Notes: Chemical mapping of a 207-nucleotide RNA with 2A3. For 2A3, 314 sequencing reads were counted. The reactions ran in a buffer of 150 mM KOAc, 10 mM MgCl2 and 150 mM bicine (pH 8.5), at 24 C. Values cover nucleotides 27 to 156.
RNA sequence: GGGAACGACUCGAGUAGAGUCGAAAAGAGCGAUUAGACAAAGGGGUAGAGCUACAUAUUAGAUAGCUGUAUAAUCGUUCAAGAUACAUCAAAACAUCUUCAAUAUUUAUUACUUACUUUCCUUUCUGCCAGAGUACGGUAUUCGUACCGUACUCAACCGAGGCUUUGAAUUCGUUCAAAGCCUCGGAAAAGAAACAACAACAACAAC
Reactivity to 2A3 in 0.01 (KOAc 150mM, MgCl2 10mM, bicine 150mM(pH8.5), 24C), signal-to-noise 1, nucleotides 027 to 156: g000a030g000c000g000a000u000u090a000g010a070c030a080a060a030g060g030g050g020u090a070g000a000g070c000u040a000c010a000u300a040u200u160a060g120a200u000a040g000c000u000g000u070a030u000a000a010u000c000g000u000u000c000a000a010g000a000u070a090c090a170u130c140a240a000a260a020c000a030u030c040u220u000c130a080a080u070a130u290u200u170a190u080u200a270c030u100u000a090c000u170u080u080c010c040u000u110u070c040u040g000c000c090a030g000a000g000u000a030c000g000g040u000a000u000u140c160g000u000a000c000c000g000u000a000c000u000c000a000a000